[RMDB]
RNA sequence: GGGAACGACUCGAGUAGAGUCGAAAACUCAGGGUUACCCCUUUAACGUAAAAACCGUGGCGGCAAGCCUGCGCCGUCAGGGACUGAGGGCAAAGGCCUCCCGGAAGUUCAGCCCGGUCAGCUACCGACUACGCUUCAUGUUCGCAUGAAGCGUAGUAAAAGAAACAACAACAACAAC
Reactivity to 2A3 in 0.01 (KOAc 150mM, MgCl2 10mM, bicine 150mM(pH8.5), 24C), signal-to-noise 1, nucleotides 027 to 126: c000u000c010a020g060g030g050u170u180a160c070c070c060c000u070u130u080a150a010c070g060u050a100a000a080a120a000c010c010g180u080g020g000c020g000g040c020a080a000g040c010c010u030g010c030g000c000c010g160u030c030a000g010g030g090a010c040u030g000a000g020g000g020c000a060a060a080g060g040c020c010u000c020c010c050g080g070a100a080g010u030u140c040a020g030c000c000c030g000g060u000c000a020g040c000u050a100c060c020g040
Reactivity to DMS in 0.01 (KOAc 150mM, MgCl2 10mM, bicine 150mM(pH8.5), 24C), signal-to-noise 2, nucleotides 027 to 126: c060u000c050a050g020g020g000u000u000a120c080c050c000c030u000u000u030a090a090c170g000u000a070a070a060a070a100c100c030g010u000g020g010c020g000g030c010a100a100g020c030c020u000g000c300g000c000c000g000u000c000a010g000g000g010a190c070u000g000a050g010g020g010c070a060a260a070g030g020c060c090u010c060c020c040g000g000a060a080g020u000u000c060a120g000c030c030c000g000g030u000c050a110g000c090u010a070c020c030g030
An RNA of 177 nucleotides, treated with 2A3 and DMS and read out base by base. The RNA was probed in 150 mM KOAc, 10 mM MgCl2 and 150 mM bicine (pH 8.5) at 24 C. For 2A3, 1,115 sequencing reads were counted.